Record summary
An RNA of 207 nucleotides, treated with 2A3 and DMS and read out base by base. For DMS, 6,938 sequencing reads were counted. For DMS the reverse transcriptase was MarathonRT. For 2A3, 3,728 sequencing reads were counted. The RNA was probed in 150 mM KOAc, 10 mM MgCl2 and 150 mM bicine (pH 8.5) at 24 C. Source: RMDB library OK3TST, as collected in RNAgym.
[RMDB]
RNA sequence: GGGAACGACUCGAGUAGAGUCGAAAAAACAAGAAACAAAACAUAAUCCAUAUGUCUAGAGAUAUUCAAGCCGUGGGUACCAAGCAGGAUCAAUGUUCAGUCUCACGUCUCAGUCUAAAGACUAAAGUUUGAAGCUGUGGGUGCCAUUUACCUUCCAUAUUACUAGUGGUUUCGACCACUAGUAAUAAAAAGAAACAACAACAACAAC
Reactivity to 2A3 in 0.01 (KOAc 150mM, MgCl2 10mM, bicine 150mM(pH8.5), 24C), signal-to-noise 6, nucleotides 027 to 156: a000a000c200a070a050g120a130a120a020c100a050a080a040a020c020a040u220a110a030u120c040c020a060u070a060u170g030u010c030u080a030g020a020g010a120u060a100u190u180c070a040a030g000c010c000g030u020g010g010g010u050a030c030c030a060a030g020c020a000g050g110a090u160c060a050a110u100g070u160u050c010a010g020u000c020u000c010a020c020g050u000c030u000c040a030g030u000c020u080a110a110a000g010a010c010u060a050a070a060g040u060u090u110g050a040a020g030c040u020g020u020g050g010g000u020g040c010c010a050u090u090u070a060c000c020u060u020c030c020a030
Reactivity to DMS in 0.01 (KOAc 150mM, MgCl2 10mM, bicine 150mM(pH8.5), 24C), signal-to-noise 3, nucleotides 027 to 156: a050a090c060a120a080g010a130a080a180c030a120a040a070a070c020a090u000a110a110u000c040c030a110u000a080u000g010u000c040u000a110g020a130g020a060u000a070u000u000c070a050a060g050c040c040g020u010g000g000g030u010a040c020c020a090a060g030c060a050g020g020a120u000c120a080a100u000g000u000u000c050a090g010u000c010u000c020a060c070g020u000c030u000c030a090g020u010c060u000a100a090a050g010a070c010u000a050a060a050g010u010u000u010g000a070a110g010c040u000g040u010g010g030g030u010g000c050c040a100u000u000u010a060c070c030u000u020c010c050a220